An RNA of 177 nucleotides, treated with 2A3 and DMS and read out base by base. The DMS profile rests on 9,115 reads.
[RMDB]
RNA sequence: GGGAACGACUCGAGUAGAGUCGAAAACUCAGGUCCUUUGCCUAUUUUAAAAGUGGAUUAUUUGGUUUUUCUGCUAUUGAGUUGUAGGAUAUCCUUAGCAGUUAGAUAUUACCUACUUAUCAGAUACAGCUAAAUAAAUCUUCGGAUUUAUUUAGCUAAAAGAAACAACAACAACAAC
Reactivity to 2A3 in 0.01 (KOAc 150mM, MgCl2 10mM, bicine 150mM(pH8.5), 24C), signal-to-noise 7, nucleotides 027 to 126: c020u010c020a000g050g030u060c030c020u070u050u080g070c030c000u120a290u100u220u080u220a120a160a070a040g110u140g050g040a070u060u050a080u120u160u110g110g000u070u060u010u010u050c010u020g010c010u010a050u040u110g030a070g090u110u100g050u170a050g030g070a050u020a020u070c020c010u010u040a020g020c030a030g030u090u090a030g030a020u060a060u110u120a080c000c010u020a020c010u060u080a170u170c060a020g030a120u030a180c080
Reactivity to DMS in 0.01 (KOAc 150mM, MgCl2 10mM, bicine 150mM(pH8.5), 24C), signal-to-noise 4, nucleotides 027 to 126: c010u010c040a060g000g010u020c000c040u020u030u030g010c040c030u000a070u030u030u040u020a040a100a070a050g040u000g000g000a070u010u030a040u020u010u040g000g020u010u010u010u010u000c010u000g010c040u000a040u020u010g000a060g010u000u020g000u010a050g000g000a070u000a030u000c010c040u010u000a080g000c070a050g000u050u020a070g000a070u020a040u020u000a080c060c010u010a010c020u010u010a090u020c060a060g000a110u030a070c190
It was measured as part of the RMDB library OK1LIB.
Reactivities are rounded to 0.1 and cut off at 0 and 3.